[RMDB]
RNA sequence: GGGAACGACUCGAGUAGAGUCGAAAAGCUUUCCGUUUCGACGGAAAGCAAAGGCAAGUACAUGAGAGAUCAAAGAUCACUCUGAAAAGCCGUACUAAAGAAAAAUCAAUCUGUUCGCAGAUUGAAACCGUAUAUUGACUUUCGAGUCAAUAUACGGAAAAGAAACAACAACAACAAC
Reactivity to 2A3 in 0.01 (KOAc 150mM, MgCl2 10mM, bicine 150mM(pH8.5), 24C), signal-to-noise 3, nucleotides 027 to 126: g000c000u000u000u000c000c000g010u030u060u070c180g120a010c010g000g020a000a000a000g000c020a050a010a000g000g010c010a020a020g090u040a040c030a090u300g000a000g000a000g000a010u020c100a300a230a040g010a000u020c000a020c050u020c000u010g000a030a060a030a020g000c000c030g030u040a040c030u150a080a150a090g070a040a100a010a000a030u040c000a000a000u000c000u010g050u050u060c240g040c050a000g000a010u010u000g000a030a010a010
Reactivity to DMS in 0.01 (KOAc 150mM, MgCl2 10mM, bicine 150mM(pH8.5), 24C), signal-to-noise 3, nucleotides 027 to 126: g010c000u000u000u010c000c010g020u000u000u000c210g000a030c010g000g000a000a010a010g000c000a010a020a060g010g010c010a010a010g010u010a070c010a050u010g000a010g010a060g010a010u000c020a160a140a210g010a040u000c000a060c010u000c000u010g000a000a100a230a270g010c000c010g020u010a220c090u000a040a070a130g020a020a070a070a120a100u010c000a000a000u000c000u000g000u000u030c190g010c000a030g000a000u000u000g010a030a050a090

Chemical mapping of a 177-nucleotide RNA with 2A3 and DMS. 2A3 adducts were read by reverse transcription with SuperScript II with manganese. The DMS profile rests on 2,465 reads. Conditions: 150 mM KOAc, 10 mM MgCl2 and 150 mM bicine (pH 8.5), 24 C. Reactivities are given for positions 27 through 126. The data come from the RNA Mapping Database (RMDB), library M2PK50.